Source information: This 207-nucleotide RNA was probed chemically with 2A3 and DMS. The data come from the RNA Mapping Database (RMDB), library OK3TST. Values cover nucleotides 27 to 156. For DMS, 3,729 sequencing reads were counted. The RNA was probed in 150 mM KOAc, 10 mM MgCl2 and 150 mM bicine (pH 8.5) at 24 C. DMS adducts were read by reverse transcription with MarathonRT.

RNA sequence: GGGAACGACUCGAGUAGAGUCGAAAACUGAAGGGCGGCUCCGGGCAGGGGGGCACGAUCUUAAGGACAGUCGCUCCCUGAACGCGGAGCCGGAGGAGACGAAGGGAAGGUGGAGCGGACGCCACCCGCGCACCGGGCAGGCGCGGAGACCGGCGUGCGAAAAGGAUAUAUUCGUAUAUCCUUUUCGAAAAGAAACAACAACAACAAC
Reactivity to 2A3 in 0.01 (KOAc 150mM, MgCl2 10mM, bicine 150mM(pH8.5), 24C), signal-to-noise 2, nucleotides 027 to 156: c060u030g010a060a060g020g040g010c000g000g010c020u020c020c000g000g050g050c080a040g000g020g000g000g020g000c030a000c010g120a130u040c020u140u200a160a100g120g000a020c030a060g010u090c060g050c020u000c010c000c030u040g010a140a030c040g030c000g150g000a000g050c000c000g000g000a000g000g000a020g000a010c080g020a030a040g030g000g000a030a050g050g010u070g020g030a040g030c030g030g000a030c030g010c000c000a050c000c020c000g000c000g000c000a040c030c100g000g050g000c040a020g010g000c010g010c010g020g010a110g020a020c050c100g000g000c020g010u040g050
Reactivity to DMS in 0.01 (KOAc 150mM, MgCl2 10mM, bicine 150mM(pH8.5), 24C), signal-to-noise 2, nucleotides 027 to 156: c070u000g010a090a080g070g040g000c050g030g050c010u000c020c020g000g000g070c020a300g010g000g020g000g010g090c020a030c010g030a110u000c020u010u030a150a180g040g010a070c070a140g000u000c110g060c020u010c020c000c000u010g010a030a050c000g000c020g000g010a030g040c010c020g000g000a010g000g010a090g030a110c030g010a090a080g010g010g000a020a020g000g000u000g000g000a120g060c060g000g020a070c030g040c010c020a150c040c000c000g000c020g010c020a080c030c000g030g010g040c060a120g000g000c020g010c010g030g010a070g000a010c070c090g000g010c050g070u010g020